[RMDB]
RNA sequence: GGGAACGACUCGAGUAGAGUCGAAAAUGUUGGGAUAUGCCGAAACUGCCAACAUAAGAAAACUUUUAGACGAGGCGGAUUACAAAGAAAUAGACCCACAAAAUGGCUUAUUUACUGGGUUCGUCCACAACGUAAAUCUGUUCGCAGAUUUACGUUGAAAAGAAACAACAACAACAAC
Reactivity to 2A3 in 0.01 (KOAc 150mM, MgCl2 10mM, bicine 150mM(pH8.5), 24C), signal-to-noise 2, nucleotides 027 to 126: u020g000u000u060g050g010g010a090u040a020u190g140c080c010g060a130a140a040c070u030g070c010c010a000a020c010a020u100a050a050g140a040a150a060a100c060u100u080u120u100a100g030a070c040g000a060g000g000c020g000g000a010u040u040a120c050a100a300a000g040a010a080a010u040a010g090a110c010c000c000a030c110a060a030a010a100u080g020g000c000u050u000a040u020u010u040a070c060u020g010g000g000u030u000c000g000u000c010c020a030
Reactivity to DMS in 0.01 (KOAc 150mM, MgCl2 10mM, bicine 150mM(pH8.5), 24C), signal-to-noise 2, nucleotides 027 to 126: u000g010u000u000g010g000g000a270u000a130u000g000c110c090g000a040a120a210c130u010g000c010c030a010a080c030a060u010a070a150g000a050a050a080a070c120u000u000u000u010a100g020a150c070g010a170g000g000c020g000g010a050u000u000a100c090a080a140a070g000a040a050a030u000a030g010a100c000c010c100a040c070a060a040a090a140u010g000g000c010u000u000a020u000u000u000a070c030u000g000g010g000u000u000c000g010u000c010c040a170